[RMDB]
RNA sequence: GGGAACGACUCGAGUAGAGUCGAAAAUAAACCAAGUUGAAUCCUGCGCGUGCAGUCGCUGCUGGAUUGCGAUAAUCGGCGUCUCGUUGUGCAUACGACGGGAUCGUAUGGUGUUCUUCAAUAGCAUGUGAGUACGCUCACGCUUAACCUUUGAGAACCUGUGAAUGAUAUUCGUAUCAUUCACAGGAAAAGAAACAACAACAACAAC
Reactivity to 2A3 in 0.01 (KOAc 150mM, MgCl2 10mM, bicine 150mM(pH8.5), 24C), signal-to-noise 4, nucleotides 027 to 156: u160a030a070a000c010c010a030a040g040u080u110g100a010a020u010c000c010u020g000c000g010c000g010u130g120c130a080g170u130c010g020c040u150g010c000u020g020g020a050u010u050g060c020g030a020u110a160a040u140c070g120g000c040g050u000c010u000c030g020u000u020g040u060g080c140a100u190a300c010g000a000c000g020g020g030a020u050c000g030u050a170u080g080g000u060g020u070u050c010u070u060c050a050a070u070a010g040c060a050u270g030u010g010a010g010u050a040c210g020c120u000c000a000c000g010c010u040u090a070a110c020c040u120u130u150g170a080g030a040a050
Reactivity to DMS in 0.01 (KOAc 150mM, MgCl2 10mM, bicine 150mM(pH8.5), 24C), signal-to-noise 2, nucleotides 027 to 156: u010a050a100a300c020c020a120a300g000u000u000g000a110a100u010c020c030u010g030c070g040c060g010u010g040c070a140g030u000c030g020c030u010g090c040u000g000g020a070u000u030g000c170g010a190u010a070a100u000c090g040g000c040g020u000c010u000c020g040u020u000g000u000g000c140a100u010a020c000g000a050c050g000g000g030a290u000c020g040u000a080u010g020g030u000g010u000u000c080u020u000c050a020a090u000a060g030c030a120u000g020u020g000a040g020u000a130c160g020c030u000c030a060c040g010c170u020u000a130a060c040c030u000u000u000g000a100g010a110a240

Source information:
This 207-nucleotide RNA was probed chemically with 2A3 and DMS. It was measured as part of the RMDB library OK3TST.